[RMDB]
RNA sequence: GGGAACGACUCGAGUAGAGUCGAAAACGCACUGUCCGGGCCAGGCCCCGGCCCGAACCCCCUGGAGACAACUCCCGCAGGGUCUGCGCUGCGCCGCGGAGCCCCGGCUGCCCACGUAGAGGCGGCGUAACGCCAUCGAGUUCGCUCGAUGGCGUUAAAAAGAAACAACAACAACAAC
Reactivity to 2A3 in 0.01 (KOAc 150mM, MgCl2 10mM, bicine 150mM(pH8.5), 24C), signal-to-noise 1, nucleotides 027 to 126: c030g060c010a010c030u040g060u090c020c020g000g010g000c000c000a050g000g050c030c000c010c020g010g000c000c000c010g010a010a000c000c000c000c020c010u020g060g080a040g010a110c060a110a070c030u020c000c000c000g030c040a070g020g020g060u090c060u040g000c040g020c070u070g030c020g000c010c010g070c020g000g040a090g050c010c000c000c010g040g000c030u020g000c020c010c000a050c060g060u070a030g040a060g070g020c010g000g000c020g020
Reactivity to DMS in 0.01 (KOAc 150mM, MgCl2 10mM, bicine 150mM(pH8.5), 24C), signal-to-noise 1, nucleotides 027 to 126: c100g000c120a120c050u030g010u020c080c020g040g000g040c020c030a130g000g020c020c030c030c070g050g000c020c010c000g010a060a150c000c000c010c030c010u000g020g000a080g000a040c180a050a030c050u010c010c040c040g050c060a110g000g000g000u000c050u000g010c000g020c000u000g030c140g010c030c000g000c020g000g000a140g000c000c000c010c060g040g010c010u000g000c020c000c050a210c190g010u040a040g000a200g010g000c020g000g030c020g000
Source information: This 177-nucleotide RNA was probed chemically with 2A3 and DMS. For DMS the reverse transcriptase was MarathonRT. Conditions: 150 mM KOAc, 10 mM MgCl2 and 150 mM bicine (pH 8.5), 24 C.